[RMDB]
RNA sequence: GGGAACGACUCGAGUAGAGUCGAAAAUCGCCGAGGACUUCCAGCUUGGCUUCCAGCAGGGCGAAGUUGCCCUUCGCUGCUUCGGUCAGUUCGCGGCUGUCGAUGUCGAGGCCCACGGUGUUGACGACCGUAUACUCCCCUUCGGGGGAGUAUACGGAAAAGAAACAACAACAACAAC
Reactivity to DMS in 0.01 (KOAc 150mM, MgCl2 10mM, bicine 150mM(pH8.5), 24C), signal-to-noise 1, nucleotides 027 to 126: u020c140g000c000c000g010a050g000g000a050c120u050u010c050c050a040g000c040u000u010g000g000c000u020u000c140c040a040g060c100a060g000g000g040c050g040a070a100g080u000u080g030c020c110c020u050u040c180g040c010u000g000c130u000u000c040g000g010u060c080a030g000u000u000c160g000c110g050g010c030u000g000u000c010g030a080u020g000u010c050g000a040g000g080c090c000c020a060c060g000g000u050g090u000u000g000a120c060g020a050
Reactivity to 2A3 in 0.01 (KOAc 150mM, MgCl2 10mM, bicine 150mM(pH8.5), 24C), signal-to-noise 3, nucleotides 027 to 126: u100c030g000c010c010g010a000g020g060a030c040u070u050c120c030a020g050c120u050u160g060g000c020u080u080c040c040a000g000c010a020g010g060g000c020g080a140a090g150u180u130g110c040c010c020u050u040c130g000c000u000g020c030u090u040c050g040g020u110c050a030g000u040u070c020g000c010g080g000c010u020g030u040c010g020a040u070g030u020c000g040a030g080g120c010c000c000a070c080g030g010u030g020u000u040g010a040c050g000a020
Chemical mapping of a 177-nucleotide RNA with DMS and 2A3.
For 2A3 the reverse transcriptase was SuperScript II with manganese.
The DMS profile rests on 1,612 reads.
For DMS the reverse transcriptase was MarathonRT.